Background: An RNA of 177 nucleotides, treated with 2A3 and DMS and read out base by base. The data come from the RNA Mapping Database (RMDB), libraries RFM100 and RFMREP. Values are in units of 0.01, from 0 to 300, in steps of 10. DMS adducts were read by reverse transcription with MarathonRT.
RNA sequence: GGGAACGACUCGAGUAGAGUCGAAAAACGAUGCGGAGUACGCUCCGCAUCGAAAGCACAAAUGAUGAAUAACAAAGGGACUUAAUACUGAAACCAGAUGUUACAUUGUAGUGUGCUGAUGUGCUAAAGUGGAUAUAGACUUCGGUCUAUAUCCACUAAAAGAAACAACAACAACAAC
Reactivity to 2A3 in 0.01 (KOAc 150mM, MgCl2 10mM, bicine 150mM(pH8.5), 24C), signal-to-noise 4, nucleotides 027 to 126: a000c020g030a000u000g010c000g000g000a000g030u070a010c200g020c080u000c000c010g030c000a000u020c000g010a000a000a000g000c020a000c000a000a020a070u050g010a000u020g050a100a250u040a040a000c020a040a080a030g060g020g060a030c020u190u220a080a080u240a300c180u150g130a110a050a030c020c000a000g010a120u110g030u030u000a000c000a010u000u040g010u020a120g090u010g010u000g010c010u010g030a190u090g050u150g010c050u110a190a020
Reactivity to DMS in 0.01 (KOAc 150mM, MgCl2 10mM, bicine 150mM(pH8.5), 24C), signal-to-noise 7, nucleotides 027 to 126: a140c020g010a010u010g010c000g000g000a000g040u010a100c260g040c000u000c000c000g020c000a000u000c000g000a020a050a040g000c010a000c000a040a120a090u020g000a010u000g000a160a100u010a010a010c010a000a250a270g000g000g010a100c110u020u010a080a100u050a140c260u020g000a130a070a130c010c010a040g010a300u010g010u000u000a020c000a010u000u000g000u010a070g020u010g000u000g000c000u000g000a100u010g000u000g000c040u000a040a180